[RMDB]
RNA sequence: GGGAACGACUCGAGUAGAGUCGAAAAGUGCUCAUCAACCCUCCAAGAAUGCCUGCCCUCCCUCCUUCCCCCAAGGCCUGUCCACAGGGGCUUGAGAUCAGCCAGAAAAGUCAGGCAACUUUUCAGGAAUUCCCGUUUUAUUCGUAAAACGGGAAUUAAAAGAAACAACAACAACAAC
Reactivity to DMS in 0.01 (KOAc 150mM, MgCl2 10mM, bicine 150mM(pH8.5), 24C), signal-to-noise 4, nucleotides 027 to 126: g020u010g020c010u010c050a070u000c080a090a170c030c010c000u000c040c050a070a110g010a120a070u010g010c020c010u000g010c050c010c010u010c030c010c020u000c020c030u000u010c010c010c000c040c040a090a080g020g010c020c010u010g010u010c040c050a060c100a180g000g000g010g000c030u010u000g000a180g000a080u010c110a080g020c010c010a070g000a050a050a040a050g000u000c040a040g010g000c060a080a080c090u000u010u010u000c060a090g010g010
The data come from the RNA Mapping Database (RMDB), library OK2TST. Structure probing data (DMS) for a 177-nucleotide construct. For DMS the reverse transcriptase was MarathonRT. The reactions ran in a buffer of 150 mM KOAc, 10 mM MgCl2 and 150 mM bicine (pH 8.5), at 24 C.